[RMDB]
RNA sequence: GGGAACGACUCGAGUAGAGUCGAAAAGGAACGCUUUCGAAGGAAAGCUUGACCAGCUAAUCUUCUGCAACGCCAUUACGAGGACUGCCCUUAGAGGCUCAUGGCGAUAGGUCACCCCGCCGGUCGGUUAAGAAUCAGCGAUUCGUCGCUGAUUCAACGCUGUCAGUAGUUUCGACUACUGACAGCGAAAAGAAACAACAACAACAAC
Reactivity to 2A3 in 0.01 (KOAc 150mM, MgCl2 10mM, bicine 150mM(pH8.5), 24C), signal-to-noise 1, nucleotides 027 to 156: g020g010a220a000c050g000c060u010u040u040c020g100a080a110g110g000a180a080a030g020c000u020u040g020a020c000c040a000g070c050u060a070a110u100c060u120u010c070u130g000c090a100a070c040g000c000c000a060u130u060a030c090g040a050g000g090a090c090u090g040c060c000c000u020u250a120g040a160g090g000c030u040c050a000u050g010g040c000g020a040u110a020g000g010u080c010a120c000c000c020c000g000c010c000g040g030u090c040g070g000u100u080a140a000g000a000a000u000c000a000g000c000g040a030u060u030c110g050u000c000g110c000u030g000a000u000u020c000a000a010
Structure probing data (2A3) for a 207-nucleotide construct. Values are in units of 0.01, from 0 to 300, in steps of 10. 2A3 adducts were read by reverse transcription with SuperScript II with manganese. It was measured as part of the RMDB library M2RFPK. The reactions ran in a buffer of 150 mM KOAc, 10 mM MgCl2 and 150 mM bicine (pH 8.5), at 24 C.